Annotation
Chemical mapping of a 207-nucleotide RNA with DMS and 2A3.

RNA sequence: GGGAACGACUCGAGUAGAGUCGAAAAGUUCGCAUGGUGCACUAUUGUGUUAUUAGUAACUAAGUAAGCUUGCAAUCGAAAAUGUUUAACCAUAAAAGGGUAAAAUGGUGUAAGACAGUCUGAUACUUUACGGCUUCACGUUUCGACGUGAAGCCAAUGCUUUAAUUAACUUCGGUUAAUUAAAGCAAAAAGAAACAACAACAACAAC
Reactivity to DMS in 0.01 (KOAc 150mM, MgCl2 10mM, bicine 150mM(pH8.5), 24C), signal-to-noise 2, nucleotides 027 to 156: g010u000u000c050g040c050a170u010g050g010u010g040c010a050c060u000a120u000u000g000u000g070u010u010a080u000u000a100g040u000a070a080c040u000a060a120g020u000a040a190g010c040u000u000g050c060a100a110u010c000g000a070a100a070a130u000g010u000u010u000a080a090c010c010a070u010a060a110a080a150g020g010g030u000a040a050a110a040u010g010g040u000g030u000a030a080g000a070c030a070g000u000c020u000g000a120u000a050c030u000u000u000a130c090g040g010c000u000u000c000a020c020g020u000u010u000c260g000a060c020g000u000g000a020a000g010c070c000a000a040
Reactivity to 2A3 in 0.01 (KOAc 150mM, MgCl2 10mM, bicine 150mM(pH8.5), 24C), signal-to-noise 2, nucleotides 027 to 156: g070u080u100c040g020c140a090u110g010g000u070g010c060a020c010u170a110u100u210g030u000g030u070u030a050u070u050a080g080u080a090a040c070u020a070a000g040u030a020a020g080c050u050u080g010c010a040a130u070c040g060a000a140a000a000u030g000u010u060u040a030a030c010c000a010u160a150a250a030a020g060g000g000u040a050a040a020a020u050g010g010u000g060u040a050a010g000a010c010a000g000u000c030u030g010a070u050a210c030u050u040u070a080c060g000g000c000u000u000c000a000c020g000u010u090u180c160g050a030c000g000u000g000a010a000g000c030c000a000a000

Reactivities are given for positions 27 through 156. It was measured as part of the RMDB library M2RFPK. 2A3 adducts were read by reverse transcription with SuperScript II with manganese.